Chemical mapping of a 207-nucleotide RNA with 2A3 and DMS. For 2A3 the reverse transcriptase was SuperScript II with manganese. For DMS, 3,073 sequencing reads were counted. The reactions ran in a buffer of 150 mM KOAc, 10 mM MgCl2 and 150 mM bicine (pH 8.5), at 24 C. The 2A3 profile rests on 1,976 reads. Values cover nucleotides 27 to 156. The data come from the RNA Mapping Database (RMDB), library RNAMAK.
[RMDB]
RNA sequence: GGGAACGACUCGAGUAGAGUCGAAAAACCACCGUUCGCGGUGGUAAAAAGAUAUGGACCCACCGAGGCAUCAUGACUUUGAUCUCGGAAACGAGGGAGUCAUGGGAGUGCCGUUUGACGUGGGUCCUAAGUCAAAAAACCAACGUUCGCGUUGGAAGAAGCAAAGAAGAUUCGUCUUCUUUGCUUCAAAAGAAACAACAACAACAAC
Reactivity to 2A3 in 0.01 (KOAc 150mM, MgCl2 10mM, bicine 150mM(pH8.5), 24C), signal-to-noise 3, nucleotides 027 to 156: a010c020c000a010c000c020g020u070u090c250g020c010g080g100u010g000g000u050a020a040a000a050a000g030a010u040a010u070g000g000a000c000c010c000a000c010c010g030a050g000g000c010a050u140c000a010u300g000a010c010u100u140u180g120a110u110c000u010c010g050g050a010a030a060c010g000a020g010g050g000a000g000u010c000a010u050g020g050g060a170g050u040g070c000c000g000u130u080u170g080a050c030g000u010g030g010g000u000c000c000u000a000a000g000u000c010a000a000a000a000a050a220c010c000a000a000c000g020u050u040c260g000c000g140u000u010g010g000a040a040
Reactivity to DMS in 0.01 (KOAc 150mM, MgCl2 10mM, bicine 150mM(pH8.5), 24C), signal-to-noise 1, nucleotides 027 to 156: a040c000c000a020c000c020g000u000u010c300g040c030g050g080u000g050g000u000a000a010a040a080a020g020a110u000a280u010g000g000a060c010c010c000a050c050c000g000a150g010g000c000a070u010c000a000u000g010a020c020u010u000u020g000a120u010c020u000c010g000g000a120a040a120c040g000a020g000g020g000a030g000u000c010a020u000g000g020g020a240g000u000g010c010c000g020u000u000u010g020a210c090g010u020g010g010g010u010c010c000u000a020a060g020u000c030a000a070a100a110a120a200c010c000a010a000c030g040u010u000c180g010c230g020u010u030g020g000a050a060